RNA sequence: GGGAACGACUCGAGUAGAGUCGAAAAUUAAAAACGAGGGGAAAAGACCAGAGUUUUUCAGGAGAAAACUGGAGGAAAAUGGGCACAAAAACUCAGAAGGCAGCUAUUCCCAGCAGCUUCCUAGUUAUGGAGUAUUCUGUUUCGACAGAAUACUCCAAAAAGAAACAACAACAACAAC
Reactivity to DMS in 0.01 (KOAc 150mM, MgCl2 10mM, bicine 150mM(pH8.5), 24C), signal-to-noise 1, nucleotides 027 to 126: u020u090a020a040a080a050a050c140g010a090g020g000g000g000a110a080a130a140g000a040c060c040a020g010a180g000u000u000u010u000u010c030a110g010g020a140g000a090a070a070a020c030u000g000g000a110g000g000a010a000a090a070u000g000g010g000c030a110c090a070a010a090a040a100c040u000c070a000g000a110a030g020g000c010a040g010c040u000a060u000u000c000c000c000a130g010c030a030g010c040u000u000c010c020u000a000g000u000u010a100
This 177-nucleotide RNA was probed chemically with DMS. The DMS profile rests on 1,611 reads.